[RMDB]
RNA sequence: GGGAACGACUCGAGUAGAGUCGAAAAGGAACCGGUUUUGGGAUAAAGACAUGCACGAAAACAAAAGUUUAAAGCGUGUCGUGUGUGUAUGAUAACAAGCGACAUGCUUUAGGUUUAUUUUGCAGCGCCAUUACCUUGUGUUCGCACAAGGUAAUGGAAAAGAAACAACAACAACAAC
Reactivity to 2A3 in 0.01 (KOAc 150mM, MgCl2 10mM, bicine 150mM(pH8.5), 24C), signal-to-noise 2, nucleotides 027 to 126: g070g030a040a050c020c000g020g030u080u070u150u170g120g000g010a070u090a060a110a000g050a040c010a040u040g000c020a030c070g090a000a030a070a030c160a060a100a020a050g000u030u020u060a000a000a000g020c030g000u000g000u000c040g010u000g010u030g010u010g030u060a160u230g210a030u120a210a020c020a000a090g000c010g000a000c000a030u020g000c000u000u000u000a000g010g000u000u020u040a110u000u080u050u050g030c040a000g070c010g010
Reactivity to DMS in 0.01 (KOAc 150mM, MgCl2 10mM, bicine 150mM(pH8.5), 24C), signal-to-noise 2, nucleotides 027 to 126: g010g010a150a130c030c030g020g000u000u000u000u010g010g000g000a100u010a040a060a060g010a120c100a080u000g000c020a050c150g000a040a050a070a050c100a030a080a030a060g000u010u000u000a010a010a010g000c000g030u000g000u010c000g030u000g000u010g060u000g000u000a090u020g020a120u000a110a020c020a040a180g000c020g000a010c010a010u000g000c000u000u000u000a000g000g000u000u000u000a110u000u010u000u000g000c050a040g000c150g000
Source: RMDB library RFMREP, as collected in RNAgym. This 177-nucleotide RNA was probed chemically with 2A3 and DMS. The 2A3 profile rests on 1,402 reads. High 2A3 reactivity points to a flexible backbone, as in loops and unpaired stretches. Values cover nucleotides 27 to 126. 2A3 adducts were read by reverse transcription with SuperScript II with manganese. Conditions: 150 mM KOAc, 10 mM MgCl2 and 150 mM bicine (pH 8.5), 24 C.